[RMDB]
RNA sequence: GGGAACGACUCGAGUAGAGUCGAAAAGUCAGGGUAUUGCGUUGGUGAAUAACGUGAUGGCGCAAUCUGAAAUUGAAGCGGGUCGAUUGGUGUGCCCGUUUAGUGAUGUGCUAGUGAGUAAAAAUGCUACUUAAAGUGCUUUCGAGCACUUUAAGUAAAAAGAAACAACAACAACAAC
Reactivity to DMS in 0.01 (KOAc 150mM, MgCl2 10mM, bicine 150mM(pH8.5), 24C), signal-to-noise 6, nucleotides 027 to 126: g020u010c020a050g000g010g020u010a100u000u000g000c030g020u000u000g020g020u000g010a140a080u010a070a050c060g020u000g010a080u010g010g010c020g020c020a030a060u000c030u010g010a050a090a120u010u020g010a070a060g010c020g010g000g030u000c050g010a250u000u010g020g020u000g020u000g010c010c010c010g020u000u000u000a040g010u010g010a080u000g010u000g020c020u000a060g010u000g010a100g010u000a010a050a070a080a080u010g000c130
Reactivity to 2A3 in 0.01 (KOAc 150mM, MgCl2 10mM, bicine 150mM(pH8.5), 24C), signal-to-noise 2, nucleotides 027 to 126: g030u020c010a010g000g000g090u150a040u040u040g050c020g020u040u090g120g120u170g130a140a100u160a100a010c020g030u060g030a100u190g010g010c050g000c030a020a090u000c010u060g100a140a140a140u130u160g050a070a000g000c010g000g000g030u040c030g060a160u030u260g080g050u100g090u070g060c000c000c010g000u000u000u020a000g000u010g050a110u040g010u000g010c000u020a000g070u060g210a050g070u150a020a050a060a040a050u110g000c030